[RMDB]
RNA sequence: GGGAACGACUCGAGUAGAGUCGAAAAGAUGAGAACAUACUGUUCAGUUGGGCCAUCAGGUGACACUCCAACUCUUGCAGGAGGUCACGAGCAAGAAAAAGAGGACGGCCUGACUUAACAAAAGAAACACCCACGAGGAUUUCGAUCCUCGUGGGUGAAAAGAAACAACAACAACAAC
Reactivity to 2A3 in 0.01 (KOAc 150mM, MgCl2 10mM, bicine 150mM(pH8.5), 24C), signal-to-noise 1, nucleotides 027 to 126: g100a060u300g000a070g080a150a030c040a060u050a060c080u020g000u000u000c040a000g000u000u000g010g000g000c010c050a050u030c060a030g300g000u000g000a020c070a120c140u030c010c000a060a120c030u050c100u300u200g000c030a070g000g000a000g020g010u000c000a000c000g000a030g000c040a060a230g060a300a050a000a090a000g090a080g150g020a010c010g000g020c000c000u020g000a000c000u000u020a010a000c000a000a050a000a000g040a000a040a000
Reactivity to DMS in 0.01 (KOAc 150mM, MgCl2 10mM, bicine 150mM(pH8.5), 24C), signal-to-noise 1, nucleotides 027 to 126: g000a040u030g010a180g000a160a060c000a030u030a090c200u000g040u000u000c000a000g000u000u000g000g000g000c000c000a270u000c000a210g050g050u000g170a060c060a120c000u010c000c040a060a150c300u010c250u030u070g010c210a300g000g000a090g000g020u000c000a010c040g000a100g100c010a000a300g000a070a180a160a000a150g000a160g060g000a000c000g000g000c000c000u000g150a040c030u000u030a000a040c000a010a010a040a000g000a120a000a130
Structure probing data (2A3 and DMS) for a 177-nucleotide construct. The 2A3 profile rests on 723 reads. For DMS, 674 sequencing reads were counted. Conditions: 150 mM KOAc, 10 mM MgCl2 and 150 mM bicine (pH 8.5), 24 C. Source: RMDB library OK1LIB, as collected in RNAgym. For DMS the reverse transcriptase was MarathonRT.